[RMDB]
Annotation: Source: RMDB library OK3TST, as collected in RNAgym. Structure probing data (DMS and 2A3) for a 207-nucleotide construct.
RNA sequence: GGGAACGACUCGAGUAGAGUCGAAAAAACACCCUGCAGAAUGUGUAUACAUGCAUGCAAGGGGAGUCUAACACUCACACUCAUCUCCGGAUGGACCCGAAGAACAUCACCAUCAACUUCCUUCAUGUGUUUUGCUAUAGCAUAGCAAUGGCCACAAUCGUAAUGGUCGAUUCGUCGACCAUUACGAAAAAGAAACAACAACAACAAC
Reactivity to DMS in 0.01 (KOAc 150mM, MgCl2 10mM, bicine 150mM(pH8.5), 24C), signal-to-noise 1, nucleotides 027 to 156: a000a020c000a060c050c000c000u000g000c020a110g000a080a020u000g000u010g000u000a090u000a010c030a060u000g010c030a170u000g080c090a010a110g030g060g000g000a080g030u000c020u000a130a150c100a170c020u000c000a070c040a110c100u000c040a220u000c070u010c000c010g010g000a160u000g030g000a030c080c120c060g000a040a060g000a020a000c030a010u000c080a030c010c010a160u020c040a070a110c070u010u000c010c030u010u020c050a190u000g000u000g000u000u020u010u000g090c040u040a040u000a170g010c030a300u000a020g000c000a000a060u010g060g030c000c040a000c000a070a300
Reactivity to 2A3 in 0.01 (KOAc 150mM, MgCl2 10mM, bicine 150mM(pH8.5), 24C), signal-to-noise 3, nucleotides 027 to 156: a000a000c060a030c020c000c000u020g000c010a020g020a110a030u030g030u010g020u150a050u050a260c010a000u040g120c010a000u020g000c050a170a180g020g000g010g000a040g040u000c080u090a100a050c010a020c060u100c020a070c020a020c060u060c020a040u020c040u030c080c040g050g000a010u040g030g060a080c020c010c090g030a040a030g020a040a010c040a090u090c030a010c050c010a020u070c030a020a060c080u040u040c010c000u080u100c080a060u110g030u000g000u040u030u060u020g000c020u020a010u060a090g120c060a080u050a030g010c000a050a050u020g060g000c040c020a040c010a080a050
Conditions: 150 mM KOAc, 10 mM MgCl2 and 150 mM bicine (pH 8.5), 24 C.